[RMDB]
RNA sequence: GGGAACGACUCGAGUAGAGUCGAAAACAUCCAACUCAUCCCCAAAAGGGAAUCUAACCACGGCAUCGCCACCGUAGGCGCAUACGCGCGGGAGAGGACAAAGCACGCCAUCAGCACAAAGGGUGUGCACCUCGUAUCACUUCGGUGAUACGAGGUGAAAAGAAACAACAACAACAAC
Reactivity to DMS in 0.01 (KOAc 150mM, MgCl2 10mM, bicine 150mM(pH8.5), 24C), signal-to-noise 3, nucleotides 027 to 126: c200a130u030c050c010a150a070c190u000c090a140u000c010c000c000c010a050a140a100a240g000g000g070a090a060u020c070u040a110a090c060c020a040c000g010g000c040a000u010c060g000c020c000a100c030c080g000u010a060g010g030c020g000c090a120u010a040c120g010c100g000c010g020g050g000a010g010a040g000g040a150c110a060a050a150g010c000a010c000g000c000c030a040u020c040a110g000c100a120c100a020a180a150g000g010g050u000g000u000g010
Reactivity to 2A3 in 0.01 (KOAc 150mM, MgCl2 10mM, bicine 150mM(pH8.5), 24C), signal-to-noise 5, nucleotides 027 to 126: c030a070u070c030c010a050a070c040u040c030a260u070c030c010c000c000a020a080a060a040g030g010g010a030a100u060c070u130a080a080c020c010a050c020g020g000c000a040u040c060g030c020c000a030c020c040g070u090a080g040g000c000g000c010a060u100a170c090g010c000g000c020g030g020g010a050g050a030g000g010a050c090a040a090a020g010c010a010c010g000c030c000a120u130c090a110g100c060a050c090a100a100a080g050g000g000u010g000u010g020
The data come from the RNA Mapping Database (RMDB), library OK1LIB.
The record gives the reactivity of an RNA of 177 nucleotides to DMS and 2A3.
The reactions ran in a buffer of 150 mM KOAc, 10 mM MgCl2 and 150 mM bicine (pH 8.5), at 24 C.
The DMS profile rests on 3,509 reads.